Description
Chemical mapping of a 177-nucleotide RNA with 2A3 and DMS. High DMS reactivity at an A or C suggests that its Watson-Crick edge is free. It was measured as part of the RMDB library OK2TRN. The reactions ran in a buffer of 150 mM KOAc, 10 mM MgCl2 and 150 mM bicine (pH 8.5), at 24 C. The DMS profile rests on 14,620 reads.

RNA sequence: GGGAACGACUCGAGUAGAGUCGAAAAUGCGGAAAAAAUGUUCAAUGGCGCGCUCCGCCUGCCCGGCAAUAUAGACUUUGCCUUCUUUCAGCCGCUGGCGCAGAUCGUCCGGGGGCAAGUCCACCAGACUUGCAACCAGAUUCGUCUGGUUGCAAGUAAAAGAAACAACAACAACAAC
Reactivity to 2A3 in 0.01 (KOAc 150mM, MgCl2 10mM, bicine 150mM(pH8.5), 24C), signal-to-noise 5, nucleotides 027 to 126: u100g000c030g020g030a080a070a010a010a030a100u160g030u110u090c080a090a090u150g040g000c020g010c010g010c050u030c020c010g020c000c010u040g020c000c020c000g020g010c020a060a000u150a030u060a200g040a040c040u050u090u120g010c020c000u040u030c020u030u190u090c050a050g030c010c020g060c100u060g010g020c040g000c050a030g020a190u090c030g070u000c030c020g030g010g000g000g000c020a030a000g020u000c000c020a040c030c000a060g060
Reactivity to DMS in 0.01 (KOAc 150mM, MgCl2 10mM, bicine 150mM(pH8.5), 24C), signal-to-noise 9, nucleotides 027 to 126: u010g020c040g010g000a000a030a080a080a080a090u010g010u010u010c100a100a100u010g010g000c040g020c090g010c090u000c040c030g000c030c050u000g010c040c070c020g020g000c050a060a050u010a180u010a110g010a060c100u000u000u010g010c030c020u000u000c040u000u000u010c140a150g010c040c030g010c050u000g010g010c060g010c120a080g000a090u000c070g000u010c020c050g010g000g010g010g010c050a020a040g000u000c010c050a090c120c090a120g000